[RMDB]
RNA sequence: GGGAACGACUCGAGUAGAGUCGAAAAGAUAUGGACAUUGAACUACUUAACCAAGUUCUUGGAUUUAAUGCUCGGAAACGAGCAUUUGUCAGAAUCAAAGUAAGCAAUGUCCUAAGUCAAAGGAAAUUUCAAUGGUUUCGACCAUUGAAAUUUCCAAGUGGUGAGAUGGAUUCGUCCAUCUCACCACAAAAGAAACAACAACAACAAC
Reactivity to 2A3 in 0.01 (KOAc 150mM, MgCl2 10mM, bicine 150mM(pH8.5), 24C), signal-to-noise 2, nucleotides 027 to 156: g030a020u060a050u130g000g000a010c010a010u020u000g000a040a020c010u030a020c020u080u070a170a120c110c120a130a120g010u040u040c030u050u140g100g000a000u290u140u160a030a000u000g000c000u010c020g090g010a070a090a080c000g010a000g000c000a000u000u000u020g000u000c010a000g030a000a000u100c090a190a040a000g000u010a030a000g030c010a000a000u000g000u000c010c000u010a060a020g010u010c040a080a050a030g000g010a000a010a000u000u000u000c010a000a000u000g000g070u020u130u140c260g090a030c000c000a000u000u010g000a000a000a000u000u000u010c000c000a000a010
Source information
Structure probing data (2A3) for a 207-nucleotide construct. Values cover nucleotides 27 to 156. For 2A3 the reverse transcriptase was SuperScript II with manganese. As a SHAPE reagent, 2A3 marks flexible, mostly unpaired nucleotides at the ribose 2'-OH.